[RMDB]
Structure probing data (2A3 and DMS) for a 207-nucleotide construct. 2A3 adducts were read by reverse transcription with SuperScript II with manganese. The reactions ran in a buffer of 150 mM KOAc, 10 mM MgCl2 and 150 mM bicine (pH 8.5), at 24 C. For 2A3, 1,052 sequencing reads were counted. Source: RMDB library M2RFPK, as collected in RNAgym.
RNA sequence: GGGAACGACUCGAGUAGAGUCGAAAACGUCCCCGUCGUACAGAAUGGUAACAUAUCUCUCCAAAUAUCUGAGCUUGGGUAUUCGGGGAAACCCAACCCCUUGGGAAGAUUGGGUAUAUGGCUAAAUUACAUCGAUUGUACUUCGGUACAAUCGAAACAGGGGAUAAAUCUUCGGAUUUAUCCCCUGAAAAGAAACAACAACAACAAC
Reactivity to 2A3 in 0.01 (KOAc 150mM, MgCl2 10mM, bicine 150mM(pH8.5), 24C), signal-to-noise 2, nucleotides 027 to 156: c060g120u050c020c020c010c010g210u140c010g010u070a140c080a200g090a150a150u100g050g050u080a100a060c000a010u040a060u040c080u010c040u030c080c010a050a110a100u160a070u000c010u040g030a030g110c050u040u110g050g000g010u040a110u100u140c060g000g010g010g020a080a010a030c000c000c000a010a020c000c010c000c040u060u090g020g000g020a040a020g040a030u020u000g000g000g020u030a030u000a000u020g050g000c060u100a080a040a190u210u130a060c050a100u050c010g000a000u000u000g000u010a000c000u000u000c040g000g000u000a000c000a000a000u000c000g010a030a000a010
Reactivity to DMS in 0.01 (KOAc 150mM, MgCl2 10mM, bicine 150mM(pH8.5), 24C), signal-to-noise 1, nucleotides 027 to 156: c060g030u000c020c000c000c100g000u000c100g010u000a250c070a140g000a180a080u000g010g000u050a080a130c040a080u000a020u000c120u000c000u010c010c020a060a010a130u010a110u000c020u000g010a300g000c150u000u000g030g000g040u020a040u000u000c080g010g040g020g030a060a080a180c000c000c000a070a040c050c000c000c040u010u000g010g000g010a260a050g020a100u000u000g000g000g040u010a090u000a010u010g010g000c060u030a010a050a080u000u020a090c030a140u000c000g000a000u000u000g000u000a020c000u000u000c300g050g100u000a000c000a000a030u000c020g000a010a020a180